[RMDB]
RNA sequence: GGGAACGACUCGAGUAGAGUCGAAAAAUAUGAAAGACAAAGCACUAUCCCCGAGAAGGGAAGCAUGGGAUUCAGUUUACCCUGAGAGCAAUCUAUAUUACAAGGUGCCGGAGUCUGAUGAAACACGGCCUAGUAGGAAUUUCGAUUCCUACUAGGCAAAAGAAACAACAACAACAAC
Reactivity to 2A3 in 0.01 (KOAc 150mM, MgCl2 10mM, bicine 150mM(pH8.5), 24C), signal-to-noise 1, nucleotides 027 to 126: a000u300a060u120g020a080a080a000g020a020c020a040a010a000g050c000a000c000u080a090u140c000c000c000c000g060a040g060a100a030g010g000g000a000a000g070c050a020u070g100g010g060a060u170u050c020a060g130u000u070u170a250c010c000c000u000g080a130g000a000g190c050a030a010u070c000u060a040u020a010u270u050a090c050a150a110g000g000u020g080c090c010g030g020a000g000u000c000u010g020a010u120g010a000a100a020c070a050c070g050
Reactivity to DMS in 0.01 (KOAc 150mM, MgCl2 10mM, bicine 150mM(pH8.5), 24C), signal-to-noise 3, nucleotides 027 to 126: a070u000a060u000g000a130a090a010g030a090c010a070a230a100g020c010a020c040u000a250u010c020c000c000c040g000a190g030a160a160g000g000g000a060a090g010c080a040u020g000g010g010a110u000u000c130a080g000u000u000u000a080c090c090c010u010g000a070g020a100g030c090a060a060u000c060u000a050u010a050u010u000a100c190a100a150g000g030u000g010c010c040g030g030a300g010u000c030u000g000a090u000g010a080a120a060c170a050c250g010